[RMDB]
This 177-nucleotide RNA was probed chemically with 2A3 and DMS. For DMS the reverse transcriptase was MarathonRT. It was measured as part of the RMDB library M2PK50. The reactions ran in a buffer of 150 mM KOAc, 10 mM MgCl2 and 150 mM bicine (pH 8.5), at 24 C.
RNA sequence: GGGAACGACUCGAGUAGAGUCGAAAAUCUGUAACGUUCGCGUUACAGAAAAGGGUAUGACAGUACCAGAUCAGAUCAUCCCAGAUCAGGAAACAGAUCAAAAAAGGGCCACGUUCGCGUGGCCCAACAGUGUUAUAGACUUCGGUCUAUAACACUGAAAAGAAACAACAACAACAAC
Reactivity to 2A3 in 0.01 (KOAc 150mM, MgCl2 10mM, bicine 150mM(pH8.5), 24C), signal-to-noise 2, nucleotides 027 to 126: u020c010u000g000u000a000a000c000g030u020u050c220g010c000g100u000u010a000c000a010g000a020a040a000a010g060g000g000u040a030u060g130a110c080a140g040u040a020c000c020a020g020a050u050c040a030g010a030u010c010a000u000c000c000c000a000g010a010u020c010a000g100g010a020a040a090c100a040g000a020u030c020a020a040a000a010a020a190g010g000g000c010c000a000c000g000u040u050c170g010c000g030u010g000g000c020c000c000a000a000
Reactivity to DMS in 0.01 (KOAc 150mM, MgCl2 10mM, bicine 150mM(pH8.5), 24C), signal-to-noise 4, nucleotides 027 to 126: u010c000u010g000u000a000a000c000g040u000u030c240g040c010g030u000u000a010c000a000g000a000a040a050a080g010g020g010u000a020u000g010a160c300a110g000u000a020c000c000a160g000a030u010c040a080g000a030u000c020a070u000c000c000c000a110g000a000u000c010a140g030g000a120a090a080c150a080g000a020u010c010a010a040a070a110a130a130g000g000g000c010c010a000c010g020u000u010c180g020c000g030u000g020g000c010c000c000a000a020